RNA sequence: GGGAACGACUCGAGUAGAGUCGAAAAAGAAUAGUUUUCGAACUAUUCUCACGACGACCUUGGGAAACCCUGUGGCGCGAUCCCACGCGAUCGUCUGUUCGAACACCUGGUUGUUCGCAACCAGGAAUUAUAACAUCCUGUUCGCAGGAUGUUAUAAAAAAGAAACAACAACAACAAC
Reactivity to 2A3 in 0.01 (KOAc 150mM, MgCl2 10mM, bicine 150mM(pH8.5), 24C), signal-to-noise 3, nucleotides 027 to 126: a010g010a000a010u010a010g010u030u000u060u170c220g030a020a000c000u010a010u000u030c010u000c000a060c040g030a010c000g040a030c000c000u040u050g020g000g030a080a090a070c020c010c040u090g140u210g180g060c130g000c020g050a100u000c000c020c030a030c050g070c120g080a180u020c000g020u000c090u140g120u060u140c070g060a070a030c030a040c090c010u000g000g040u020u010g020u050u070c280g000c070a000a000c010c010a010g010g000a000a010
Reactivity to DMS in 0.01 (KOAc 150mM, MgCl2 10mM, bicine 150mM(pH8.5), 24C), signal-to-noise 6, nucleotides 027 to 126: a010g000a020a000u000a010g010u000u000u000u010c130g010a020a030c000u000a010u000u010c000u000c080a130c110g000a020c010g000a070c100c010u000u000g000g010g000a090a170a120c180c020c060u000g020u010g020g020c080g030c050g000a200u000c010c000c020a090c090g010c090g000a080u000c010g010u000c030u000g010u000u000c060g000a110a090c220a130c000c000u000g000g010u000u000g010u000u010c170g020c010a010a000c000c010a010g000g000a020a020
About this RNA: This 177-nucleotide RNA was probed chemically with 2A3 and DMS. Reactivities are given for positions 27 through 126. 2A3 adducts were read by reverse transcription with SuperScript II with manganese. Conditions: 150 mM KOAc, 10 mM MgCl2 and 150 mM bicine (pH 8.5), 24 C.